[RMDB]
An RNA of 177 nucleotides, treated with 2A3 and DMS and read out base by base.
RNA sequence: GGGAACGACUCGAGUAGAGUCGAAAACGUCGGCGACGACGACAGUGACGUUGUCGGGGCCGCCGCCGCGCAGCGCCAGUUCAAUGAGGCGGUGAGCGCUCUCGGCAACCUCGGGGAUCUGCAGGGCCGCUCUACUAUGAUUCGUCAUAGUAGAGCGAAAAGAAACAACAACAACAAC
Reactivity to 2A3 in 0.01 (KOAc 150mM, MgCl2 10mM, bicine 150mM(pH8.5), 24C), signal-to-noise 7, nucleotides 027 to 126: c020g020u020c010g000g060c050g030a080c010g000a000c010g010a010c070a040g150u100g120a030c060g000u000u010g010u010c000g010g000g010g000c000c020g010c000c000g000c000c000g010c020g030c050a060g050c050g070c080c040a080g030u190u250c100a130a100u150g030a070g120g020c000g000g010u010g030a090g010c060g000c010u010c020u020c010g000g000c000a010a010c000c000u020c010g030g000g000g010a050u020c010u050g020c040a070g010g040g010c020
Reactivity to DMS in 0.01 (KOAc 150mM, MgCl2 10mM, bicine 150mM(pH8.5), 24C), signal-to-noise 4, nucleotides 027 to 126: c040g030u010c020g020g010c140g010a150c010g000a010c020g010a120c070a100g010u020g010a030c200g000u000u000g030u000c000g040g000g000g000c240c010g030c000c010g000c020c010g010c030g030c030a020g040c300g000c040c120a110g000u030u050c130a080a150u000g010a110g000g010c000g000g000u000g010a140g020c030g030c030u000c000u000c030g010g000c020a020a030c020c030u000c020g000g000g000g000a060u000c030u020g010c060a120g000g000g010c080
The data come from the RNA Mapping Database (RMDB), library OK1LIB. Conditions: 150 mM KOAc, 10 mM MgCl2 and 150 mM bicine (pH 8.5), 24 C. Reactivities are given for positions 27 through 126.